[RMDB]
RNA sequence: GGGAACGACUCGAGUAGAGUCGAAAAAUGGUAAACGCUGGGAGAUGCAAGGUCACAGGCGUUGAUCUACUGAAGCGCGCACGGUAGGGAGCCUGAAGUCUGAUGACCAUCUCCUGUGCUGAAGCGCGCACGGCAACCGAAAGGUGCGACAUAGGAACCAAUAUUAAUACUUCGGUAUUAAUAUUGGAAAAGAAACAACAACAACAAC
Reactivity to DMS in 0.01 (KOAc 150mM, MgCl2 10mM, bicine 150mM(pH8.5), 24C), signal-to-noise 2, nucleotides 027 to 156: a090u000g040g010u010a120a060a080c080g000c030u000g050g010g000a090g010a070u000g020c120a130a190g060g030u000c080a300c020a030g010g030c030g020u010u050g000a080u010c000u000a060c000u040g030a060a060g060c010g020c010g010c020a300c040g040g000u000a130g000g000g010a040g000c050c040u000g020a100a110g010u000c060u010g000a230u000g020a130c140c010a050u000c000u010c000c000u020g010u000g000c010u000g000a020a050g010c040g030c010g010c010a180c040g000g000c020a100a130c010c010g000a070a080a150g010g040u000g010c000g010a070c070a060u010a110g020g000a130a270
Reactivity to 2A3 in 0.01 (KOAc 150mM, MgCl2 10mM, bicine 150mM(pH8.5), 24C), signal-to-noise 4, nucleotides 027 to 156: a000u080g010g010u070a080a050a020c030g010c020u010g000g020g010a010g010a010u020g050c180a200a120g140g010u130c090a030c010a070g000g010c010g120u210u040g000a010u000c000u010a000c000u020g060a170a030g010c020g000c000g000c000a010c020g010g000u000a010g010g010g020a020g000c000c000u010g020a060a010g030u010c080u150g160a200u210g040a080c040c000a010u000c000u000c000c000u000g010u010g000c000u010g020a090a030g000c000g000c000g000c000a010c000g020g000c010a020a030c000c000g020a040a030a030g010g000u020g010c010g010a030c060a110u200a070g150g020a040a050
Chemical mapping of a 207-nucleotide RNA with DMS and 2A3. Values cover nucleotides 27 to 156. For 2A3, 4,758 sequencing reads were counted. DMS adducts were read by reverse transcription with MarathonRT. The DMS profile rests on 3,740 reads. Conditions: 150 mM KOAc, 10 mM MgCl2 and 150 mM bicine (pH 8.5), 24 C. 2A3 adducts were read by reverse transcription with SuperScript II with manganese.